[RMDB]
Source information: The record gives the reactivity of an RNA of 177 nucleotides to 2A3 and DMS. The reactions ran in a buffer of 150 mM KOAc, 10 mM MgCl2 and 150 mM bicine (pH 8.5), at 24 C.
RNA sequence: GGGAACGACUCGAGUAGAGUCGAAAACAUACUCCGUCAGAUCUUUGUAGAUACGGACGCCGGAAUUGUGCAGGGAAUCGGCCACCUGGUCGAUGGGCGUUAAUGUGGCUAUGCUGGGACCGGAUCCAUAUUAGGACGUGUUCGCACGUCCUAAUAUAAAAGAAACAACAACAACAAC
Reactivity to 2A3 in 0.01 (KOAc 150mM, MgCl2 10mM, bicine 150mM(pH8.5), 24C), signal-to-noise 3, nucleotides 027 to 126: c010a010u190a060c020u020c030c000g060u070c060a100g030a250u030c030u130u200u200g090u220a050g000a050u020a100c050g030g030a010c040g000c030c000g050g080a070a080u150u080g070u060g110c050a060g000g040g030a080a100u030c000g020g060c010c010a110c070c110u100g030g010u000c000g000a020u020g020g050g000c030g030u020u120a100a070u230g020u080g040g000c010u020a030u120g030c040u030g010g000g070a040c010c030g000g020a010u000c000c000
Reactivity to DMS in 0.01 (KOAc 150mM, MgCl2 10mM, bicine 150mM(pH8.5), 24C), signal-to-noise 4, nucleotides 027 to 126: c080a130u000a120c100u000c020c020g010u000c080a100g020a120u000c020u000u010u000g010u010a060g010a080u010a070c070g000g000a040c070g020c030c020g010g010a100a100u000u010g000u000g010c050a070g010g010g000a080a040u000c010g020g010c000c020a150c200c160u010g020g020u000c020g000a020u000g010g000g000c050g000u000u000a050a050u010g020u000g010g010c050u000a040u000g010c060u010g010g000g010a120c070c040g020g000a090u000c060c090
For DMS, 5,214 sequencing reads were counted.